The record gives the reactivity of an RNA of 177 nucleotides to DMS and 2A3. It was measured as part of the RMDB library OK1LIB. Reactivities are rounded to 0.1 and cut off at 0 and 3. Conditions: 150 mM KOAc, 10 mM MgCl2 and 150 mM bicine (pH 8.5), 24 C. 2A3 adducts were read by reverse transcription with SuperScript II with manganese.

RNA sequence: GGGAACGACUCGAGUAGAGUCGAAAAGGCGAGCUGGUGGCGCAGCGCGCCGAGGAACCGGUGGCCUUUCUUGCCCAGCUCGGCCGCGACCACCGCAAAUACGGUGUGCUGCCAACCCAGUACGACAGUGUAUGCCUUAUUUCGAUAAGGCAUACACAAAAGAAACAACAACAACAAC
Reactivity to DMS in 0.01 (KOAc 150mM, MgCl2 10mM, bicine 150mM(pH8.5), 24C), signal-to-noise 3, nucleotides 027 to 126: g020g000c000g000a300g060c000u000g000g000u000g000g000c140g000c010a020g010c000g010c070g060c000c000g010a050g010g000a130a090c300c030g000g020u010g000g020c050c000u020u010u000c090u040u080g030c030c000c060a100g000c100u030c140g010g030c030c150g060c240g000a200c040c000a010c000c000g000c040a060a140a140u110a080c000g000g000u000g010u000g000c050u020g000c000c050a190a100c200c000c000a010g000u000a100c050g000a070c070a110
Reactivity to 2A3 in 0.01 (KOAc 150mM, MgCl2 10mM, bicine 150mM(pH8.5), 24C), signal-to-noise 7, nucleotides 027 to 126: g110g040c040g070a090g020c020u010g010g000u030g030g030c180g000c080a000g000c010g000c010g000c010c000g000a040g010g020a050a050c030c010g000g020u010g000g020c020c090u080u190u100c080u090u200g030c020c010c020a060g020c060u100c060g080g010c040c030g040c020g020a040c010c000a010c000c000g010c030a070a110a040u130a040c000g020g010u010g020u020g000c000u000g000c000c000a010a010c010c000c000a000g010u040a060c050g040a030c060a090